[RMDB]
RNA sequence: GGGAACGACUCGAGUAGAGUCGAAAAGGAUGAAAUGCAUGUCUAAGACAGCAUCUUCGCGUAACUCUCUCAGCGCACAAUUGCGCCGAGCCGCGAACACAAGAAUUGAGGUUGAAGGUAACCUCGCACUUUCCAUUGCCAACGAUUUACUGUUGGCGCGGAAGCUAAGCUUCGGCUUAGCUUCCGCAAAAGAAACAACAACAACAAC
Reactivity to 2A3 in 0.01 (KOAc 150mM, MgCl2 10mM, bicine 150mM(pH8.5), 24C), signal-to-noise 1, nucleotides 027 to 156: g090g090a050u120g110a100a150a000u100g000c080a070u030g010u170c110u120a120a000g000a010c010a010g010c000a060u000c000u030u000c000g000c000g010u040a080a090c030u000c000u040c000u000c140a040g000c000g070c000a050c000a300a250u220u100g010c040g020c010c020g050a070g040c090c000g000c000g010a040a000c140a020c010a060a050g000a120a040u060u190g000a040g020g000u030u030g050a220a190g000g040u140a010a010c000c000u010c040g050c070a040c010u060u030u110c050c000a060u050u090g010c010c000a040a000c000g040a110u000u240u270a210c080u040g000u000u000g010g000c000